[RMDB]
Structure probing data (DMS and 2A3) for a 207-nucleotide construct.
2A3 adducts were read by reverse transcription with SuperScript II with manganese.
DMS adducts were read by reverse transcription with MarathonRT.
Conditions: 150 mM KOAc, 10 mM MgCl2 and 150 mM bicine (pH 8.5), 24 C.
RNA sequence: GGGAACGACUCGAGUAGAGUCGAAAAGGAGCUCGAGUUGUUCUUAGCUCAACUAAGGGCAACUGUAUGUUCUUAAGCUGUUUAAGGGCAUAUAUUAGUGUGUAGUUGAGCUACACAUUAGUAAUAGGUUAUAAACAGCUUAUGGCCUGUUCGAGCAGGGCAUUAUUUAGUUCGCUAAAUAAUGCCCAAAAGAAACAACAACAACAAC
Reactivity to DMS in 0.01 (KOAc 150mM, MgCl2 10mM, bicine 150mM(pH8.5), 24C), signal-to-noise 2, nucleotides 027 to 156: g020g030a270g040c000u010c050g000a030g020u000u010g020u000u000c000u000u000a010g020c020u010c160a090a120c040u000a040a050g020g010g040c020a060a070c070u000g020u000a090u010g010u000u000c000u000u000a010a060g000c000u000g020u000u000u000a030a080g010g010g040c010a030u000a030u000a000u010u000a040g020u000g010u000g020u000a000g020u000u000g020a230g020c000u010a010c050a010c050a030u000u010a030g000u000a040a100u000a010g030g030u000u000a240u000a030a020a070c030a060g030c030u000u000a040u000g020g000c040c030u000g010u010u000c070g010a040g060c040a260
Reactivity to 2A3 in 0.01 (KOAc 150mM, MgCl2 10mM, bicine 150mM(pH8.5), 24C), signal-to-noise 5, nucleotides 027 to 156: g120g010a050g010c000u000c010g010a000g000u000u000g000u010u010c000u000u000a000g000c010u020c070a020a090c040u070a040a120g060g010g020c030a070a030c050u050g060u130a120u140g040u100u000c020u010u000a000a000g010c000u010g020u020u010u000a050a060g070g040g000c030a010u010a000u000a000u030u060a020g000u000g000u010g000u010a020g000u010u210g110a020g010c000u000a000c000a000c000a010u030u050a000g020u020a080a250u010a110g010g040u040u020a020u020a080a010a010c000a010g010c000u000u010a010u020g020g010c010c010u050g020u040u070c100g000a010g020c050a070

The DMS profile rests on 5,174 reads.